This 177-nucleotide RNA was probed chemically with DMS and 2A3.
The 2A3 profile rests on 858 reads.
Conditions: 150 mM KOAc, 10 mM MgCl2 and 150 mM bicine (pH 8.5), 24 C.
[RMDB]
RNA sequence: GGGAACGACUCGAGUAGAGUCGAAAAAGCCACCGUACGCGGUGGCAAAAGUUAAACAGACUCAUCCACGAGACACUCCUGUUGUGGAUGAGUCUGUUUAACUUUAUAGUCACGGUACGCCGUGACAAUAUAGUACGUUGUUCGCAACGUACUAUAUAAAAGAAACAACAACAACAAC
Reactivity to DMS in 0.01 (KOAc 150mM, MgCl2 10mM, bicine 150mM(pH8.5), 24C), signal-to-noise 9, nucleotides 027 to 126: a090g010c000c000a010c000c000g030u010a080c210g030c020g020g020u000g010g000c010a000a000a010a000g000u000u000a000a010a010c000a010g000a010c000u000c010a000u000c000c000a010c000g010a130g010a090c090a110c210u020c210c130u010g010u000u010g010u000g000g000a010u000g000a000g000u000c000u000g000u000u000u000a000a000c000u000u000u000a050u020a090g010u000c000a010c000g000g000u010a110c280g030c010c000g010u000g000a000c010a060
Reactivity to 2A3 in 0.01 (KOAc 150mM, MgCl2 10mM, bicine 150mM(pH8.5), 24C), signal-to-noise 1, nucleotides 027 to 126: a000g030c030c020a000c000c000g010u010a050c300g000c000g000g000u020g000g010c000a000a000a000a000g000u000u000a000a000a000c060a000g120a010c010u020c050a020u000c000c000a010c040g030a030g120a110c120a050c070u090c010c060u150g050u150u110g000u060g000g000a000u000g000a020g000u000c020u000g000u010u000u050a000a000c000u000u010u000a030u040a010g000u010c000a000c010g030g030u090a060c280g090c040c000g000u000g000a000c000a040